[RMDB]
Structure probing data (DMS) for a 177-nucleotide construct. The RNA was probed in 150 mM KOAc, 10 mM MgCl2 and 150 mM bicine (pH 8.5) at 24 C.
RNA sequence: GGGAACGACUCGAGUAGAGUCGAAAAUGACGUCUGCCACGGUAUUCAGGGAGUCCUUAGUAGCAUGGCAAUGACAGGGACUGAACUGGGCACAAGAAGAGGCCAUUGUGAAGGUAGACGAAGGUUAUCAAAUCGUAGGCUUCGGCCUACGAUUUGAAAAAGAAACAACAACAACAAC
Reactivity to DMS in 0.01 (KOAc 150mM, MgCl2 10mM, bicine 150mM(pH8.5), 24C), signal-to-noise 1, nucleotides 027 to 126: u020g000a070c030g010u000c000u000g010c000c000a160c300g030g040u030a110u000u000c010a110g000g000g010a090g000u000c000c010u000u000a190g030u000a110g140c040a100u030g030g020c190a100a090u000g000a010c000a050g040g010g000a030c010u000g050a040a240c000u000g020g020g000c010a000c020a000a050g010a050a110g000a070g000g010c020c020a220u000u030g000u000g000a030a130g070g000u000a020g000a070c000g000a090a070g010g000u010u010a090